[RMDB]
RNA sequence: GGGAACGACUCGAGUAGAGUCGAAAAUGUCGAACGUUAUGGGCCGCGUCUUCAUGCAUCCCGAUCUCGACGACCCGUUCAUAGCGGCGGAAAGAAUCCUCGGUGCCUGCCCGCUGGGCGAGCAGGAGCCACCUAAUACUUUCGAGUAUUAGGUGGCAAAAGAAACAACAACAACAAC
Reactivity to DMS in 0.01 (KOAc 150mM, MgCl2 10mM, bicine 150mM(pH8.5), 24C), signal-to-noise 5, nucleotides 027 to 126: u000g000u000c010g010a060a110c080g020u010u000a080u010g010g010g020c070c100g010c040g010u000c080u000u010c070a060u000g010c090a120u000c020c020c020g000a080u010c060u000c030g010a080c040g000a070c070c010c100g010u010u010c140a090u000a100g020c060g000g000c050g000g000a070a070a120g000a100a100u000c030c010u000c120g010g010u000g030c030c010u000g010c040c000c000g020c030u010g010g020g020c010g010a040g010c010a030g000g000a160
Reactivity to 2A3 in 0.01 (KOAc 150mM, MgCl2 10mM, bicine 150mM(pH8.5), 24C), signal-to-noise 6, nucleotides 027 to 126: u160g020u030c010g030a090a060c070g040u060u110a090u190g010g000g010c060c010g010c040g020u040c050u140u090c070a060u110g020c000a050u050c020c010c000g020a100u040c020u030c070g040a040c010g030a030c030c000c000g020u090u090c050a110u060a140g030c030g030g000c040g030g050a090a090a040g040a030a090u030c000c010u010c040g080g050u080g040c000c000u010g000c010c010c000g040c080u150g060g150g070c030g010a010g000c010a000g020g030a010
Structure probing data (DMS and 2A3) for a 177-nucleotide construct.
The 2A3 profile rests on 9,707 reads.
Reactivities are given for positions 27 through 126.
The reactions ran in a buffer of 150 mM KOAc, 10 mM MgCl2 and 150 mM bicine (pH 8.5), at 24 C.
As a SHAPE reagent, 2A3 marks flexible, mostly unpaired nucleotides at the ribose 2'-OH.